[RMDB]
RNA sequence: GGGAACGACUCGAGUAGAGUCGAAAAACCUUUGUGAAUAGACAUGCGAUUCGGGAUUGCGGAUACCCAUUGGGUAUCCGAACUACAAUCCUCCUUUCGCAACAGCUAUUCACUCUGGUAAAACUACUGUGAUACUGUUCGCAGUAUCACAGUAGAAGUCGAUCUAAGAGUUCGCUCUUAGAUCGACAAAAGAAACAACAACAACAAC
Reactivity to 2A3 in 0.01 (KOAc 150mM, MgCl2 10mM, bicine 150mM(pH8.5), 24C), signal-to-noise 2, nucleotides 027 to 156: a000c010c000u020u000u000g000u000g020a000a010u000a000g060a130c080a170u050g020c010g020a020u040u050c070g000g000g000a000u000u000g010c030g010g020a000u000a000c020c030c130a280u230u300g010g000g010u000a000u000c010c010g000a010a000c040u160a040c020a000a000u010c000c000u140c020c010u030u020u010c000g010c020a010a020c030a010g040c000u010a010u000u010c000a000c000u000c000u000g010g020u050a120a080a020a010c000u000a000c000u000g000u010g000a010u000a000c000u020g030u080u080c300g040c120a020g020u040a000u000c000a010c000a000g000u000a000g000a010a000

Conditions: 150 mM KOAc, 10 mM MgCl2 and 150 mM bicine (pH 8.5), 24 C. Chemical mapping of a 207-nucleotide RNA with 2A3. The 2A3 profile rests on 1,654 reads. It was measured as part of the RMDB library RNAMAK.